[RMDB]
RNA sequence: GGGAACGACUCGAGUAGAGUCGAAAAGUUCGUCCUCCUACGGAUGCCCAGGUCGGACCGCGGGGAGGUGGAGAUGCCAUGCCGACCCGAAGAGGAAAGAAGAACUCGGACGCGAACCGUGAGUGGAGCCUAAUCUAAGGUUCGCCUUAGAUUAGGCAAAAGAAACAACAACAACAAC
Reactivity to 2A3 in 0.01 (KOAc 150mM, MgCl2 10mM, bicine 150mM(pH8.5), 24C), signal-to-noise 2, nucleotides 027 to 126: g010u030u040c010g000u040c020c010u020c000c010u030a030c040g070g010a050u110g060c000c020c000a040g070g060u050c020g040g030a060c050c020g020c040g020g010g000g000a050g010g020u050g060g060a200g020a090u200g060c040c010a070u140g000c020c000g060a050c000c000c020g030a080a030g070a060g020g090a070a100a060g050a040a020g000a040a030c010u020c050g030g000a020c060g030c040g090a050a060c010c000g030u050g030a050g010u040g000g050a030
Reactivity to DMS in 0.01 (KOAc 150mM, MgCl2 10mM, bicine 150mM(pH8.5), 24C), signal-to-noise 3, nucleotides 027 to 126: g010u000u000c020g010u000c010c010u000c010c030u000a100c040g000g000a070u010g010c020c020c030a090g000g020u000c040g010g010a200c040c110g000c020g000g010g000g010a180g000g020u000g020g010a130g010a100u010g010c040c050a090u000g020c020c000g010a190c020c000c030g000a080a070g010a080g010g000a030a070a090g010a070a080g000a090a070c070u000c060g000g000a090c070g010c050g000a080a070c030c010g000u000g020a080g000u010g000g000a240

This 177-nucleotide RNA was probed chemically with 2A3 and DMS. The reactions ran in a buffer of 150 mM KOAc, 10 mM MgCl2 and 150 mM bicine (pH 8.5), at 24 C. 2A3 adducts were read by reverse transcription with SuperScript II with manganese. It was measured as part of the RMDB library VIROID.